Annotation: The data come from the RNA Mapping Database (RMDB), library RFM100. This 177-nucleotide RNA was probed chemically with 2A3 and DMS. In probing experiments dimethyl sulfate is read out at A N1 and C N3, which are open when not base-paired.
RNA sequence: GGGAACGACUCGAGUAGAGUCGAAAAUGCUGGUGGUGGUGGAGGAGGAUGAAGUUCGCCAUUCAAACAACCCUUUCUGCACCGGUCCUGUGCUGCCCGUUGCCUGCAGGAGCAAAACACACCCACUAUUCAGCGAACUGUUCGCAGUUCGCUGAAUAAAAGAAACAACAACAACAAC
Reactivity to 2A3 in 0.01 (KOAc 150mM, MgCl2 10mM, bicine 150mM(pH8.5), 24C), signal-to-noise 2, nucleotides 027 to 126: u110g040c020u030g010g010u010g070g040u050g000g020u030g000g050a040g070g030a070g000g010a040u160g060a100a010g050u010u030c010g060c050c000a060u020u150c050a070a150a100c000a050a080c010c000c000u010u040u040c000u000g070c070a000c040c000g030g040u030c010c020u030g020u090g030c030u060g010c000c000c050g080u030u060g000c010c000u020g010c000a000g000g040a060g040c020a000a000a080a000c100a000c010a000c020c000c020a030c010u010
Reactivity to DMS in 0.01 (KOAc 150mM, MgCl2 10mM, bicine 150mM(pH8.5), 24C), signal-to-noise 1, nucleotides 027 to 126: u070g000c030u010g000g010u120g000g070u010g130g050u000g000g030a060g030g000a200g000g000a150u010g050a120a040g020u000u030c050g000c000c000a120u000u060c050a140a080a160c140a140a160c030c040c100u110u020u000c000u000g090c040a000c030c000g000g000u000c040c050u000g040u000g000c110u110g000c080c040c000g000u010u000g000c000c000u010g000c010a230g010g040a090g000c040a090a050a040a070c020a030c110a280c000c000c000a070c070u000